The record gives the reactivity of an RNA of 177 nucleotides to DMS.
The data come from the RNA Mapping Database (RMDB), library TTRDES.
For DMS the reverse transcriptase was MarathonRT.
The DMS profile rests on 1,032 reads.
In probing experiments dimethyl sulfate is read out at A N1 and C N3, which are open when not base-paired.
RNA sequence: GGGAACGACUCGAGUAGAGUCGAAAAGAUAUGGACAGCCUACAGGCAACAGCCAUAUCUCGGAAACGAGAUGAUGGACAUGCCUGCGGGCUGUCCUAAGUCAAAACCCGUGACUUCGGUCACGGGACUUUGGACAAGUCUUCGGACUUGUCCAAAGAAAAGAAACAACAACAACAAC
Reactivity to DMS in 0.01 (KOAc 150mM, MgCl2 10mM, bicine 150mM(pH8.5), 24C), signal-to-noise 1, nucleotides 027 to 126: g000a070u000a300u000g010g000a030c050a040g040c000c010u000a160c050a000g000g030c020a030a100c290a130g000c000c010a000u000a070u000c000u010c000g000g000a120a120a190c010g010a030g010a010u000g030a080u020g010g000a030c060a270u000g000c020c000u000g020c030g010g010g000c000u000g000u000c000c010u000a010a160g000u000c050a090a020a120a050c000c010c000g050u000g010a010c000u000u010c240g030g010u000c000a000c000g010g000g000a000